Structure probing data (2A3 and DMS) for a 177-nucleotide construct.
The 2A3 profile rests on 1,634 reads.
The DMS profile rests on 939 reads.
It was measured as part of the RMDB library M2PK50.
RNA sequence: GGGAACGACUCGAGUAGAGUCGAAAAUUUUGAGCUUUCGAGCUCAAAACAACUGGUGUCCCGACCAGGAAAAACAGAUUUACACGAAGUGAAAGAUCCAAAGGGCCACCAUGUUCGCAUGGUGGAACUCACCUUCAAACUUCGGUUUGAAGGUGAGAAAAGAAACAACAACAACAAC
Reactivity to 2A3 in 0.01 (KOAc 150mM, MgCl2 10mM, bicine 150mM(pH8.5), 24C), signal-to-noise 2, nucleotides 027 to 126: u000u010u000u000g000a000g000c010u070u040u170c300g080a000g000c010u000c000a010a000a000a000c030a050a090c000u000g000g000u020g030u030c000c000c000g010a020c010c000a010g070g040a020a130a030a050a000c040a020g090a060u110u110u200a040c080a010c160g190a300a070g000u030g090a160a010a050g030a030u040c030c030a020a070a060g120g030g000c000c000a000c000c000a000u000g010u020u050c250g000c080a000u010g000g020u000g000g010a010a000
Reactivity to DMS in 0.01 (KOAc 150mM, MgCl2 10mM, bicine 150mM(pH8.5), 24C), signal-to-noise 1, nucleotides 027 to 126: u000u010u010u000g000a010g000c010u000u000u020c160g020a000g000c020u010c000a030a000a000a040c230a120a100c030u000g000g000u000g010u000c000c000c020g010a120c030c020a030g000g000a050a010a130a120a030c130a060g000a060u000u000u000a230c080a100c030g000a130a100g000u000g010a020a070a090g010a040u010c010c120a040a080a100g010g000g000c040c000a000c000c000a010u000g000u040u000c180g020c000a010u000g000g020u000g000g000a020a030
Values cover nucleotides 27 to 126. DMS adducts were read by reverse transcription with MarathonRT.